An RNA of 177 nucleotides, treated with 2A3 and DMS and read out base by base. For 2A3 the reverse transcriptase was SuperScript II with manganese. DMS adducts were read by reverse transcription with MarathonRT. For DMS, 2,728 sequencing reads were counted.

[RMDB]
RNA sequence: GGGAACGACUCGAGUAGAGUCGAAAAUCAGGUUCGUCGAAGGUGCACGCCGUCGAACAGCAGGAGAUCCUGGACACCGCGUUCGGCUGAGGACAUGCCGCCCGCGACCUGCCCACCAUGGGCUGGAGCGGAGCAGUCCUUUCGAGGACUGCUCCGCAAAAGAAACAACAACAACAAC
Reactivity to 2A3 in 0.01 (KOAc 150mM, MgCl2 10mM, bicine 150mM(pH8.5), 24C), signal-to-noise 4, nucleotides 027 to 126: u120c020a010g050g040u180u100c030g050u060c050g090a150a030g020g050u080g040c060a010c060g030c020c000g000u010c010g000a020a040c010a040g070c040a020g000g060a100g010a060u120c020c020u080g040g010a030c020a020c100c000g000c000g020u000u010c010g020g010c040u070g040a140g080g070a080c020a060u090g010c000c030g020c000c000c000g000c010g010a030c000c010u000g020c020c000c010a040c050c030a170u220g020g040g000c010u020g000g030a020
Reactivity to DMS in 0.01 (KOAc 150mM, MgCl2 10mM, bicine 150mM(pH8.5), 24C), signal-to-noise 2, nucleotides 027 to 126: u010c020a030g030g000u030u010c060g020u000c060g010a160a050g000g010u030g030c080a090c060g020c110c050g000u000c040g000a030a070c090a100g010c000a070g010g010a160g000a180u050c040c040u000g040g000a100c150a110c010c000g020c000g040u000u000c030g000g000c040u000g020a180g020g000a170c050a070u030g000c020c000g000c070c010c040g000c060g000a010c030c000u000g020c000c000c000a120c250c070a110u010g000g000g000c050u000g000g000a300